[RMDB]
RNA sequence: GGGAACGACUCGAGUAGAGUCGAAAAGAUAUGGAACGAGGAUGUGAACUACUUAAUCCUUUAUCGUUGAAAGCUUUCGGAAACGAAAGCUGGAGAUAUUCGUUAAGCACAUCCUCGUUCCUAAGUCCAGUAUACUAAGCUUCGGCUUAGUAUACUGAAAAGAAACAACAACAACAAC
Reactivity to DMS in 0.01 (KOAc 150mM, MgCl2 10mM, bicine 150mM(pH8.5), 24C), signal-to-noise 4, nucleotides 027 to 126: g010a110u000a300u000g000g010a000a000c000g010a010g020g010a020u000g000u000g000a060a050c070u020a300c020u000u000a010a010u010c050c070u010u000u000a010u000c010g010u010u020g000a210a180a050g000c000u000u000u000c000g010g000a140a110a280c000g000a000a010a010g010c000u000g000g010a050g000a010u000a000u000u000c130g000u000u000a000a010g000c010a010c000a010u000c000c000u000c000g000u000u000c000c000u000a010a080g010u010c040
Reactivity to 2A3 in 0.01 (KOAc 150mM, MgCl2 10mM, bicine 150mM(pH8.5), 24C), signal-to-noise 4, nucleotides 027 to 126: g020a030u140a060u240g010g010a000a000c010g010a020g000g000a000u010g020u000g000a100a070c080u220a020c010u300u060a040a060u300c010c020u050u040u040a080u050c070g110u120u050g040a050a030a000g000c000u000u000u000c020g020g050a110a090a080c010g010a000a000a000g010c000u000g010g000a030g000a000u020a030u020u080c040g010u010u030a020a010g040c010a010c000a000u000c000c000u000c000g000u000u000c000c000u000a010a000g000u000c000
Chemical mapping of a 177-nucleotide RNA with DMS and 2A3. The RNA was probed in 150 mM KOAc, 10 mM MgCl2 and 150 mM bicine (pH 8.5) at 24 C. DMS adducts were read by reverse transcription with MarathonRT. For DMS, 11,187 sequencing reads were counted.